Annotation:
Chemical mapping of a 207-nucleotide RNA with DMS and 2A3. The reactions ran in a buffer of 150 mM KOAc, 10 mM MgCl2 and 150 mM bicine (pH 8.5), at 24 C. The data come from the RNA Mapping Database (RMDB), library RSTRND.
[RMDB]
RNA sequence: GGGAACGACUCGAGUAGAGUCGAAAAAGCUGUCCACAAAGCAGUCUGCUAGUCGUCGUUGCACCGCUUUGCAAGGCGCAACGCACGGCGAGACCGUCGAAUUGCGGGGACAUCCUUACAGCUCAAGCUACCAACUUGUCGCAGAAAUGCUGGCAAGCUGUCAGAAGAUGUUCGCAUCUUCUGACAGAAAAGAAACAACAACAACAAC
Reactivity to DMS in 0.01 (KOAc 150mM, MgCl2 10mM, bicine 150mM(pH8.5), 24C), signal-to-noise 1, nucleotides 027 to 156: a050g020c070u010g020u020c010c040a110c050a060a120a080g000c010a000g000u000c000u000g050c010u000a070g050u010c000g010u000c000g060u030u000g030c000a040c000c000g000c170u000u020u020g010c140a040a090g040g000c030g010c000a040a000c010g030c050a030c000g000g020c000g000a090g000a090c030c050g010u000c020g010a070a160u000u010g060c070g000g010g000g000a190c130a050u000c050c040u000u000a110c010a190g000c020u000c030a080a120g020c040u010a220c040c000a050a090c010u010u000g020u000c010g020c010a060g000a110a130a130u010g000c000u000g030g040c010a030a030g010
Reactivity to 2A3 in 0.01 (KOAc 150mM, MgCl2 10mM, bicine 150mM(pH8.5), 24C), signal-to-noise 6, nucleotides 027 to 156: a000g050c040u020g010u030c010c020a090c060a050a100a010g020c020a010g030u010c030u030g060c050u100a040g020u010c000g000u000c000g010u010u010g010c020a040c040c030g030c130u200u280u300g070c100a130a130g010g000c010g010c010a000a000c000g020c010a000c000g000g010c000g000a010g020a040c020c010g080u110c040g100a180a210u120u060g010c030g020g020g000g010a010c010a060u070c000c020u020u090a050c040a020g000c020u070c110a080a070g030c040u080a070c040c030a040a050c020u000u010g010u000c000g000c010a010g030a030a060a020u050g000c040u080g000g000c000a010a010g000